This 177-nucleotide RNA was probed chemically with 2A3 and DMS. Conditions: 150 mM KOAc, 10 mM MgCl2 and 150 mM bicine (pH 8.5), 24 C. For 2A3, 3,380 sequencing reads were counted. DMS adducts were read by reverse transcription with MarathonRT.
[RMDB]
RNA sequence: GGGAACGACUCGAGUAGAGUCGAAAAGAUAUGGAAUUUAAUCUUUACUACCCACCAAGGGAACUACGACGAAGUGUCGGAAACGACACUAAGUCGCCCUUGAGGUAAAGAUUAAAUUCCUAAGUCAGUAUUCAGGUAUGUUCGCAUACCUGAAUACAAAAGAAACAACAACAACAAC
Reactivity to 2A3 in 0.01 (KOAc 150mM, MgCl2 10mM, bicine 150mM(pH8.5), 24C), signal-to-noise 2, nucleotides 027 to 126: g030a010u080a070u240g000g000a020a010u010u000u010a020a020u010c000u000u040u000a020c010u090a090c080c090c070a080c040c000a010a010g060g000g030a180a140c200u290a100c300g000a020c010g030a120a020g010u000g010u010c000g000g060a060a010a030c020g010a000c000a010c010u020a010a020g000u000c000g010c000c000c000u000u000g010a000g050g000u000a010a000a000g000a000u000u000a000a000a000u010u000c000c000u000a060a010g080u000c040a010
Reactivity to DMS in 0.01 (KOAc 150mM, MgCl2 10mM, bicine 150mM(pH8.5), 24C), signal-to-noise 2, nucleotides 027 to 126: g010a090u000a300u010g000g000a000a000u020u000u000a020a000u000c000u020u000u000a020c000u010a120c050c120c060a300c180c000a000a000g010g050g000a190a050c190u020a300c010g010a010c000g000a260a020g000u010g020u000c000g000g000a120a030a200c000g000a020c000a030c000u000a010a290g020u000c000g000c010c010c000u000u000g000a080g050g000u000a030a060a000g000a000u000u000a000a000a000u000u000c000c000u010a000a130g010u000c080a050